Source: RMDB library M2RFOK, as collected in RNAgym.
The record gives the reactivity of an RNA of 207 nucleotides to DMS and 2A3.
Conditions: 150 mM KOAc, 10 mM MgCl2 and 150 mM bicine (pH 8.5), 24 C.
RNA sequence: GGGAACGACUCGAGUAGAGUCGAAAAACAGAAAAAAGGAGUUUAAAUUAGAUUUGCAAACGGACGGUACUAAAUACCGUCACUUUUACGUCUAACUUAUCGUUAACUCUGCAAAAAGAAAACUAGAAAAACAAGCGUGAGUUCGCUCACGCUUGAAGUUAAAGUAAUUGUUCGCAAUUACUUUAACAAAAGAAACAACAACAACAAC
Reactivity to DMS in 0.01 (KOAc 150mM, MgCl2 10mM, bicine 150mM(pH8.5), 24C), signal-to-noise 1, nucleotides 027 to 156: a090c050a070g020a000a040a200a100a130a140g060g000a000g000u000u000u000a010a000a060u000u010a000g010a040u010u040u040g040c040a010a050a020c140g020g010a010c000g000g020u000a050c090u000a050a000a300u000a000c010c000g000u000c020a000c030u000u000u000u000a000c030g000u010c000u000a010a000c010u000u000a060u000c070g000u010u000a020a060c000u020c000u010g040c060a010a010a120a070a120g000a050a020a040a140c090u010a060g000a100a070a060a040a140c000a000a030g000c000g090u010g010a010g020u000u020c300g060c000u010c040a000c000g040c000u000u010g000a000a070
Reactivity to 2A3 in 0.01 (KOAc 150mM, MgCl2 10mM, bicine 150mM(pH8.5), 24C), signal-to-noise 2, nucleotides 027 to 156: a000c030a030g130a040a090a010a030a010a080g020g000a020g000u070u070u190a050a040a040u070u030a030g020a030u040u080u220g050c080a060a000a000c030g010g010a010c000g000g030u050a040c030u220a110a060a080u030a000c000c000g000u000c000a050c010u000u010u010u060a030c030g020u000c010u010a010a020c020u080u110a070u270c020g060u040u020a020a020c020u000c010u050g030c080a030a060a060a100a000g050a050a080a010a020c110u130a080g160a100a100a030a020a020c010a010a000g010c000g000u010g010a010g010u020u100c150g050c060u000c000a000c000g040c000u000u000g000a020a000